[RMDB]
RNA sequence: GGGAACGACUCGAGUAGAGUCGAAAAGGCUGAUAAUAUCGUUAAGCAGCGUCGAUUUACCCGACCCCGAUACGCCCGUUAUCACCGAGAGUGUACCCAACGGAAAGGUUACAUCGAUAUUUUUUAAUGUUUCUACUAGGUUCGCCUAGUAGAAACAAAAAGAAACAACAACAACAAC
Reactivity to 2A3 in 0.01 (KOAc 150mM, MgCl2 10mM, bicine 150mM(pH8.5), 24C), signal-to-noise 1, nucleotides 027 to 126: g090g000c010u020g040a020u020a160a050u120a110u170c080g050u100u110a100a080g000c050a000g020c000g080u030c050g030a050u050u020u060a080c010c000c000g030a030c010c010c020c010g010a040u030a080c040g050c030c020c000g060u040u040a110u140c020a030c090c020g070a100g000a030g120u010g000u000a030c040c030c000a040a050c040g040g000a110a070a020g050g020u020u050a010c010a020u020c040g070a010u000a210u110u120u010u020u000u080a140a110
Reactivity to DMS in 0.01 (KOAc 150mM, MgCl2 10mM, bicine 150mM(pH8.5), 24C), signal-to-noise 3, nucleotides 027 to 126: g020g020c030u000g000a050u000a070a150u010a140u000c110g020u000u000a080a160g020c000a040g000c080g020u000c050g000a060u010u020u000a070c130c010c030g000a230c060c010c050c070g000a080u000a040c020g030c030c010c030g020u000u010a080u000c120a040c120c040g010a110g000a110g030u000g030u000a030c030c030c080a080a140c110g000g000a050a080a080g000g000u000u000a020c040a030u010c020g000a060u010a020u020u000u000u010u020u000a050a210